Structure probing data (DMS and 2A3) for a 207-nucleotide construct. Conditions: 150 mM KOAc, 10 mM MgCl2 and 150 mM bicine (pH 8.5), 24 C. Source: RMDB library M2RFPK, as collected in RNAgym. Values cover nucleotides 27 to 156.

RNA sequence: GGGAACGACUCGAGUAGAGUCGAAAAGGCGUAGCCGACAACAUGCCCAGGUAGCCCAGACCUUCAAUGCUACGGUGCGUUGCGACGCACGGUCUGAUUCUUCACAACGACGUUCACCGCGUCUUCUACAACCGGCAAAGAUUCGUCUUUGCCGGAAACUUGAUAGCACCUUCGGGUGCUAUCAAGUAAAAGAAACAACAACAACAAC
Reactivity to DMS in 0.01 (KOAc 150mM, MgCl2 10mM, bicine 150mM(pH8.5), 24C), signal-to-noise 2, nucleotides 027 to 156: g000g030c000g080u030a160g060c040c010g060a240c060a080a070c050a070u020g030c020c000c060a100g050g020u000a070g000c040c060c060a060g000a070c030c050u000u000c050a090a140u010g000c010u000a080c050g000g040u000g000c050g020u010u000g010c070g040a130c040g000c050a080c030g000g000u000c030u050g010a230u000u000c090u000u030c070a200c060a140a120c040g000a070c040g020u000u000c030a070c080c060g000c010g020u000c020u000u000c010u000a140c050a070a290c000c010g000g010c000a000a000a050g000a050u000u010c300g010u000c030u000u000u020g030c000c000g010g010a000a020
Reactivity to 2A3 in 0.01 (KOAc 150mM, MgCl2 10mM, bicine 150mM(pH8.5), 24C), signal-to-noise 3, nucleotides 027 to 156: g060g000c070g090u080a030g030c030c010g070a050c060a130a040c030a060u120g020c000c000c020a020g040g040u060a050g000c060c060c030a000g000a030c010c000u040u050c100a040a060u070g010c000u000a020c020g000g020u000g000c000g010u020u040g060c100g140a010c010g000c000a000c000g010g010u000c000u000g010a060u120u100c090u150u160c080a060c050a240a070c100g020a010c000g090u200u150c060a050c070c030g000c010g020u010c050u030u020c050u110a140c020a140a040c000c000g000g010c000a000a000a000g000a000u030u100c110g020u010c060u000u000u010g000c000c050g000g000a000a000